[RMDB]
RNA sequence: GGGAACGACUCGAGUAGAGUCGAAAAGUCAGGAAGGAUCAGCACCGAGGAUCCAUACGUCGCGCACGCCGGGCUCAGUCCGCGGCCGGGCAGUGUCGGUGCGGCGAGCAGCAUCAUGGGACCGCCGCUCUGCGUGUCGUUUCGACGACACGCAGAGAAAAGAAACAACAACAACAAC
Reactivity to DMS in 0.01 (KOAc 150mM, MgCl2 10mM, bicine 150mM(pH8.5), 24C), signal-to-noise 2, nucleotides 027 to 126: g000u010c110a220g030g030a120a090g010g000a060u000c120a050g000c080a110c050c000g000a090g000g000a020u000c010c070a120u000a080c130g010u020c060g000c040g000c010a040c030g000c010c050g000g000g010c000u020c050a100g020u040c050c060g000c040g000g010c000c030g010g000g000c050a120g000u000g020u010c050g050g000u000g020c010g000g000c010g020a190g040c090a090g000c060a060u030c090a120u010g000g000g000a070c070c050g040c060c040g000
Reactivity to 2A3 in 0.01 (KOAc 150mM, MgCl2 10mM, bicine 150mM(pH8.5), 24C), signal-to-noise 3, nucleotides 027 to 126: g130u100c110a020g050g070a110a130g010g000a040u020c010a000g120c030a040c050c030g020a030g000g060a020u030c030c000a020u070a050c050g050u020c010g030c010g000c040a050c040g020c020c020g050g000g000c000u000c070a080g100u030c010c000g030c020g000g000c000c000g000g020g000c040a090g040u060g070u160c070g030g060u140g030c030g030g000c000g010a030g000c000a010g000c000a040u070c020a020u130g020g010g010a000c010c010g010c020c010g000
Structure probing data (DMS and 2A3) for a 177-nucleotide construct. The data come from the RNA Mapping Database (RMDB), library OK1LIB. 2A3 adducts were read by reverse transcription with SuperScript II with manganese. In probing experiments dimethyl sulfate is read out at A N1 and C N3, which are open when not base-paired. The reactions ran in a buffer of 150 mM KOAc, 10 mM MgCl2 and 150 mM bicine (pH 8.5), at 24 C. Reactivities are given for positions 27 through 126. The 2A3 profile rests on 2,362 reads.